[RMDB]
RNA sequence: GGGAACGACUCGAGUAGAGUCGAAAAGAAGAAGUUACCUCAAAAUAUUAUCUAAGUUAACAAAUUAGAAGUAAGACCUCAAUUUAAGCAUUUGGUACUUAUUAUGAGACAAUCUUCUUAGGGGUCGUGCUAAUCAUCAGUUCGCUGAUGAUUAGCAAAAAGAAACAACAACAACAAC
Reactivity to DMS in 0.01 (KOAc 150mM, MgCl2 10mM, bicine 150mM(pH8.5), 24C), signal-to-noise 1, nucleotides 027 to 126: g000a050a030g000a080a070g020u000u000a130c180c000u000c020a030a040a050a000u000a010u000u000a040u000c010u010a020a060g030u000u000a050a170c100a010a140a040u020u000a150g010a020a030g050u000a100a110g000a300c150c000u000c030a030a070u000u000u000a060a180g050c110a100u000u000u000g000g000u000a020c120u000u000a040u000u000a120u000g020a010g000a040c050a050a110u000c010u000u000c000u000u000a100g010g000g000g000u020c110g020
This 177-nucleotide RNA was probed chemically with DMS. Reactivities are given for positions 27 through 126.